[RMDB]
RNA sequence: GGGAACGACUCGAGUAGAGUCGAAAAGAUAUGGAGCGGCCAGGGAGCUCCUGUCGGAAACGACUGCGUAGGAUAGAGCUUUGAUCUGGCGCUCCUAAGUCAGACCUAUCAGCUUCGGCUGAUAGAACAGACAUCAAGUGUUCGCACUUGAUGUCUGAAAAGAAACAACAACAACAAC
Reactivity to DMS in 0.01 (KOAc 150mM, MgCl2 10mM, bicine 150mM(pH8.5), 24C), signal-to-noise 2, nucleotides 027 to 126: g010a040u000a120u010g020g010a010g030c020g010g040c020c010a020g010g030g010a020g000c000u000c000c000u000g010u000c000g030g000a060a040a050c010g020a010c030u000g000c250g020u010a090g000g010a210u010a170g000a050g000c010u000u020u020g000a040u010c000u000g000g010c000g010c020u000c000c000u000a010a060g020u000c000a110g010a200c170c000u000a010u000c000a010g000c010u000u010c220g020g010c010u000g000a000u000a000g000a110a180
Reactivity to 2A3 in 0.01 (KOAc 150mM, MgCl2 10mM, bicine 150mM(pH8.5), 24C), signal-to-noise 2, nucleotides 027 to 126: g000a010u010a030u060g010g000a000g030c060g140g160c130c020a000g010g060g030a020g020c010u020c000c020u030g000u000c000g000g060a000a000a000c010g030a000c040u070g040c300g300u280a170g100g250a230u180a220g180a020g030c000u300u300u070g040a050u050c000u000g010g000c000g000c000u000c000c000u010a000a000g000u000c020a010g010a150c010c000u000a020u000c000a000g010c010u080u180c270g110g000c010u000g010a010u010a000g010a050a030